This 177-nucleotide RNA was probed chemically with DMS and 2A3. For 2A3, 845 sequencing reads were counted. The RNA was probed in 150 mM KOAc, 10 mM MgCl2 and 150 mM bicine (pH 8.5) at 24 C.
[RMDB]
RNA sequence: GGGAACGACUCGAGUAGAGUCGAAAAACUAUUAAUUUGCUAACUACUUAUCUUCUGAAUCUAAGGACUACUCAAUUUCAUAAGAGUUGGGUGUAUUGGUGAUGCUUUGAAUGGACUCCGUGUUAUGCAGUAAACAACGGUUCGCCGUUGUUUACUGAAAAGAAACAACAACAACAAC
Reactivity to DMS in 0.01 (KOAc 150mM, MgCl2 10mM, bicine 150mM(pH8.5), 24C), signal-to-noise 3, nucleotides 027 to 126: a100c050u010a060u020u000a070a070u000u010u000g000c010u000a110a080c060u000a100c030u000u000a050u000c040u010u000c040u000g010a080a050u010c090u010a100a090g010g010a100c080u000a040c010u000c010a060a020u010u000u010c040a120u030a100a230g010a030g000u010u000g000g020g010u000g010u000a050u000u010g010g010u000g000a090u000g000c060u000u000u000g000a070a060u000g000g000a090c060u000c040c050g020u010g020u000u000a060u010g010
Reactivity to 2A3 in 0.01 (KOAc 150mM, MgCl2 10mM, bicine 150mM(pH8.5), 24C), signal-to-noise 2, nucleotides 027 to 126: a000c010u040a030u220u200a160a060u080u070u130g040c010u010a030a050c010u090a030c020u160u030a040u070c040u120u020c040u090g090a070a020u030c020u080a050a030g080g050a040c030u050a020c020u090c010a010a070u020u200u160c120a100u120a300a110g020a000g000u020u020g000g000g000u010g000u010a080u040u080g060g010u050g020a070u070g020c070u040u080u050g150a140a080u090g010g000a070c010u000c050c030g030u050g070u110u020a130u180g000